[RMDB]
RNA sequence: GGGAACGACUCGAGUAGAGUCGAAAAAUGAUUCGUAGUGUAAGACGAUCGACAGUCAUCGCUAGCCAGCAGGACCACCAAAGGAAUACGCUUCGGUAACUACUCGAGAUCCCAAGCGAUAAAACAAAUGUAAAGCGCAAUUCGUUGCGCUUUACAUAAAAGAAACAACAACAACAAC
Reactivity to DMS in 0.01 (KOAc 150mM, MgCl2 10mM, bicine 150mM(pH8.5), 24C), signal-to-noise 1, nucleotides 027 to 126: a130u000g060a030u000u060c020g010u020a010g010u020g000u060a180a190g020a140c000g060a050u000c010g040a040c000a090g000u010c020a010u000c040g010c020u000a050g020c060c080a090g000c050a050g000g000a150c050c050a050c080c020a020a040a090g000g020a050a010u000a130c130g010c040u010u010c020g000g000u010a140a100c010u000a020c070u000c030g000a030g000a190u000c000c000c000a100a050g000c020g000a130u020a080a020a050a090c170a010a090
Reactivity to 2A3 in 0.01 (KOAc 150mM, MgCl2 10mM, bicine 150mM(pH8.5), 24C), signal-to-noise 1, nucleotides 027 to 126: a000u040g010a010u160u100c040g010u030a060g100u070g070u120a040a130g030a050c020g000a030u050c040g090a030c000a040g010u030c030a010u040c010g040c040u020a010g000c040c000a040g000c000a000g050g030a010c030c020a030c020c030a020a180a000g080g030a140a080u040a070c020g000c000u000u020c000g130g000u020a090a140c000u010a000c010u000c000g010a000g010a040u000c060c000c000a000a000g050c070g100a080u090a160a250a040a060c040a040a170

Source: RMDB library M2PK90, as collected in RNAgym. Structure probing data (DMS and 2A3) for a 177-nucleotide construct. For 2A3, 784 sequencing reads were counted. The RNA was probed in 150 mM KOAc, 10 mM MgCl2 and 150 mM bicine (pH 8.5) at 24 C.